[RMDB]
RNA sequence: GGGAACGACUCGAGUAGAGUCGAAAAUUAUUUAACACAAAUGUGUGUCAUCACUUUCUUAAUGUUCACGUCAGCAGCGUCAGGUUACGCCGUAUGUAUUGCGAUGUUAAGACGUUUGACUGGAAUGCUCCAGUACGCUUUUCGAAGCGUACUGGAGAAAAGAAACAACAACAACAAC
Reactivity to DMS in 0.01 (KOAc 150mM, MgCl2 10mM, bicine 150mM(pH8.5), 24C), signal-to-noise 2, nucleotides 027 to 126: u050u000a130u010u040u010a060a080c030a010c050a080a130a110u070g000u050g000u000g010u040c080a080u070c120a110c170u000u000u010c020u010u000a040a100u060g000u010u000c090a100c220g000u010c000a030g060c100a030g000c000g020u010c010a080g010g030u060u000a030c070g000c040c040g010u000a010u000g030u050a110u060u000g010c000g000a060u000g000u010u000a000a080g000a050c050g000u010u020u010g030a020c030u000g000g000a040a100u040g040
Reactivity to 2A3 in 0.01 (KOAc 150mM, MgCl2 10mM, bicine 150mM(pH8.5), 24C), signal-to-noise 3, nucleotides 027 to 126: u040u010a100u030u170u150a150a020c030a020c030a060a230a280u280g090u120g010u030g030u090c030a020u090c030a000c050u100u110u100c030u020u140a170a100u200g000u020u000c000a000c150g030u010c010a020g000c010a000g010c130g000u000c040a020g130g050u180u000a010c010g030c000c000g020u050a000u160g240u060a140u300u060g010c000g000a000u000g060u150u030a030a040g010a000c000g000u030u050u000g080a050c050u040g050g000a020a040u100g050
The data come from the RNA Mapping Database (RMDB), library OK1LIB. Chemical mapping of a 177-nucleotide RNA with DMS and 2A3. DMS adducts were read by reverse transcription with MarathonRT.